[RMDB]
RNA sequence: GGGAACGACUCGAGUAGAGUCGAAAAUUCAUUGAGUGGUGCGCUACCGCUUUGUGGACAAACUUGAUGAACUAGCGCCUGCCCGGUGAUGGGUUUAUUGAGAAUAUCUUGCGGCAAACUGACAAAGCUUAUGCUAUCUUUUCGAAGAUAGCAUAAGAAAAGAAACAACAACAACAAC
Reactivity to DMS in 0.01 (KOAc 150mM, MgCl2 10mM, bicine 150mM(pH8.5), 24C), signal-to-noise 9, nucleotides 027 to 126: u010u010c030a050u000u000g000a040g030u000g010g010u000g020c130g010c080u000a070c030c050g010c040u000u010u000g020u000g010g010a050c140a070a080a120c040u000u000g010a030u000g010a020a030c080u000a130g010c040g000c010c040u010g010c150c120c090g010g010u000g000a060u000g010g010g010u000u000u000a040u000u000g000a050g000a120a090u000a080u000c030u000u000g020c050g000g010c060a040a060a090c080u000g010a080c120a080a120a140g010
Reactivity to 2A3 in 0.01 (KOAc 150mM, MgCl2 10mM, bicine 150mM(pH8.5), 24C), signal-to-noise 5, nucleotides 027 to 126: u020u020c000a010u020u030g010a010g010u030g040g020u060g040c100g010c080u080a020c000c000g000c040u010u040u060g020u040g020g020a020c030a050a110a030c060u040u050g010a030u040g000a060a020c020u010a030g020c000g020c000c010u070g030c030c030c010g040g020u050g030a080u090g020g000g000u000u070u010a030u010u060g010a020g010a020a020u040a030u150c040u040u080g020c010g040g000c040a080a060a060c050u110g050a040c060a040a110a050g020